RNA sequence: GGGAACGACUCGAGUAGAGUCGAAAAGCUCAACGGCGUGUUGCUCGCCCGGCCCGACAUCUUCCCCGUCGGCGGCAUCCGGGCGCGGGCGUAUCGCCUCAGCGAAUAUGCGCUGGCGGACAGCAGCUAUCUCUUUUAAUUUCGAUUAAAAGAGAUAAAAAGAAACAACAACAACAAC
Reactivity to 2A3 in 0.01 (KOAc 150mM, MgCl2 10mM, bicine 150mM(pH8.5), 24C), signal-to-noise 4, nucleotides 027 to 126: g040c020u020c070a050a060c080g020g020c030g010u060g050u100u200g050c080u050c040g010c000c000c010g020g020c010c000c000g020a030c010a110u070c110u110u100c040c040c010c000g040u030c010g010g030c050g080g030c020a040u040c050c040g000g010g030c110g040c020g030g000g000c030g040u090a040u060c020g000c000c000u030c010a010g020c010g040a080a070u210a110u280g080c000g000c000u010g020g030c020g010g030a030c020a030g030c000a010g000c020
Reactivity to DMS in 0.01 (KOAc 150mM, MgCl2 10mM, bicine 150mM(pH8.5), 24C), signal-to-noise 9, nucleotides 027 to 126: g010c020u000c070a100a160c180g010g010c020g020u000g010u010u000g010c090u000c010g010c010c000c010g010g000c070c000c000g020a100c150a060u000c140u010u000c040c030c020c240g000u000c040g010g020c240g010g010c080a070u010c080c010g010g000g010c020g020c080g010g000g020c010g020u000a020u000c020g010c000c030u000c130a050g010c020g010a120a120u010a080u000g000c020g000c010u000g000g010c050g010g000a100c080a050g010c050a060g010c100
An RNA of 177 nucleotides, treated with 2A3 and DMS and read out base by base. Source: RMDB library OK2TST, as collected in RNAgym. For 2A3 the reverse transcriptase was SuperScript II with manganese. DMS adducts were read by reverse transcription with MarathonRT. The RNA was probed in 150 mM KOAc, 10 mM MgCl2 and 150 mM bicine (pH 8.5) at 24 C.